[RMDB]
RNA sequence: GGGAACGACUCGAGUAGAGUCGAAAAGUAAUGGAUCUUGGUUAGAGAAGCAGACAAAUAGACAAGACAGACCGACAGAGAGAAACGCGUACACAACCCAGCAGCCAUCCUUCUUCUUCGUUGGAAAAACAUUGUCUAUUUUCGAAUAGACAAUGUUAAAAGAAACAACAACAACAAC
Reactivity to 2A3 in 0.01 (KOAc 150mM, MgCl2 10mM, bicine 150mM(pH8.5), 24C), signal-to-noise 5, nucleotides 027 to 126: g030u050a020a100u090g040g030a060u040c010u040u050g050g020u090u110a020g010a010g010a160a020g010c030a010g030a100c030a020a120a060u110a060g060a030c020a050a010g020a040c020a020g030a020c000c020g020a020c030a020g090a010g000a000g040a070a100a030c050g020c000g030u060a030c060a000c010a050a060c000c030c000a020g010c010a010g000c030c010a030u030c020c000u030u060c000u070u020c010u070u070c050g090u060u040g020g000a020a030a100
Reactivity to DMS in 0.01 (KOAc 150mM, MgCl2 10mM, bicine 150mM(pH8.5), 24C), signal-to-noise 9, nucleotides 027 to 126: g010u010a090a100u010g010g010a070u000c040u000u000g010g010u010u000a070g010a100g000a080a090g010c050a050g010a070c090a030a060a090u010a060g010a070c070a050a060g010a070c080a070g000a070c050c030g000a060c070a080g010a110g010a090g010a060a080a070c130g000c090g010u010a070c100a060c090a070a090c060c040c020a070g010c050a060g000c030c030a050u000c030c020u000u000c050u000u000c060u000u000c110g020u010u010g010g010a050a050a060
An RNA of 177 nucleotides, treated with 2A3 and DMS and read out base by base.
Source: RMDB library OK2TST, as collected in RNAgym.
For DMS the reverse transcriptase was MarathonRT.